[RMDB]
Chemical mapping of a 207-nucleotide RNA with 2A3.
For 2A3, 659 sequencing reads were counted.
Conditions: 150 mM KOAc, 10 mM MgCl2 and 150 mM bicine (pH 8.5), 24 C.
Source: RMDB library OK3TST, as collected in RNAgym.
RNA sequence: GGGAACGACUCGAGUAGAGUCGAAAAUCUUUAGCUGGUGGUGUUUCACAAAGGGAAUGAAAUCUUGUUCUUGGGUUGUGAAACCGUAAGGACACUCCGGUCUCCAAGUUGACAUUCGUUUAUGGAAGUGCCCAUCUCCUUUCCUCGUCACACCUAACCUCGGCUUAAAAUUCGUUUUAAGCCGAGGAAAAGAAACAACAACAACAAC
Reactivity to 2A3 in 0.01 (KOAc 150mM, MgCl2 10mM, bicine 150mM(pH8.5), 24C), signal-to-noise 2, nucleotides 027 to 156: u050c020u000u120u080a040g020c090u030g050g000u050g000g020u090g020u090u100u070c010a020c030a010a050a010g030g020g020a030a020u020g080a030a120a140u090c100u090u090g000u010u030c020u030u050g230g000g000u050u020g060u020g010a110a060a030c010c000g030u020a000a000g020g000a000c000a000c080u050c030c030g040g010u010c020u000c030c000a040a170g050u040u060g040a040c050a110u070u060c100g080u150u170u090a110u170g020g030a040a130g020u010g100c060c010c000a020u000c010u030c000c000u050u030u050c000c010u000c050g040u050c020a050c000a000c050c010u000a050a120